[RMDB]
RNA sequence: GGGAACGACUCGAGUAGAGUCGAAAAGAUAUGGACUUGGACCAUUCUACCCACCGAGUGUAUCGGAAACGAUACGCUCGAGGAAUGCUAGUCCUAAGUCAAAGAGCAUACCUUCGGGUAUGCUCAACCAAAGGGUCUUCUUCGGAAGACCCUUUGGAAAAGAAACAACAACAACAAC
Reactivity to DMS in 0.01 (KOAc 150mM, MgCl2 10mM, bicine 150mM(pH8.5), 24C), signal-to-noise 1, nucleotides 027 to 126: g000a240u000a080u020g020g010a040c020u000u000g000g030a080c170c000a020u000u000c000u060a090c060c010c080a300c220c000g000a010g000u000g000u000a000u020c060g010g000a150a090a140c020g000a020u000a030c000g010c010u000c000g000a080g000g010a000a000u000g000c220u000a170g000u000c000c000u000a030a050g000u000c010a030a200a180g000a000g000c000a000u000a000c000c000u000u000c210g020g020g010u020a020u000g030c000u000c000a020a060